Chemical mapping of a 177-nucleotide RNA with 2A3 and DMS.
Conditions: 150 mM KOAc, 10 mM MgCl2 and 150 mM bicine (pH 8.5), 24 C.
High DMS reactivity at an A or C suggests that its Watson-Crick edge is free.
For DMS, 1,267 sequencing reads were counted.

[RMDB]
RNA sequence: GGGAACGACUCGAGUAGAGUCGAAAAGCAAAGAAAUUUUAUCCCAAUAAGGCGAAGUAAGCAAGUCGACCCAACGCGAGGGCGCUAGGGAGCUUACGAGCCCUAGCAGACUAAUAGCGAGAAAAAACGCUAACAGUAUGUUCGCAUACUGUUAGCGAAAAGAAACAACAACAACAAC
Reactivity to 2A3 in 0.01 (KOAc 150mM, MgCl2 10mM, bicine 150mM(pH8.5), 24C), signal-to-noise 2, nucleotides 027 to 126: g020c050a070a050a010g140a040a230a080u100u180u110u050a080u070c020c010c000a010a050u110a040a010g030g030c020g000a040a020g040u100a000a040g070c070a080a000g070u010c020g040a190c010c000c010a060a040c030g020c010g130a090g130g020g000c020g000c000u000a020g000g070g010a020g030c010u010u030a070c040g030a020g000c020c000c000u000a010g020c010a010g060a140c040u040a010a160u060a120g030c010g040a060g210a080a100a010a010a000a000
Reactivity to DMS in 0.01 (KOAc 150mM, MgCl2 10mM, bicine 150mM(pH8.5), 24C), signal-to-noise 2, nucleotides 027 to 126: g030c140a080a030a060g030a070a080a160u000u000u000u000a090u000c020c000c010a140a060u030a090a120g000g000c020g000a070a070g000u000a040a040g030c070a060a110g010u030c030g020a140c010c010c010a040a070c070g030c000g030a120g000g000g000c050g000c000u000a020g010g040g020a100g000c030u020u010a080c200g000a170g000c010c020c020u000a010g010c020a120g000a060c050u000a050a060u010a160g020c040g000a110g010a020a020a060a060a080a030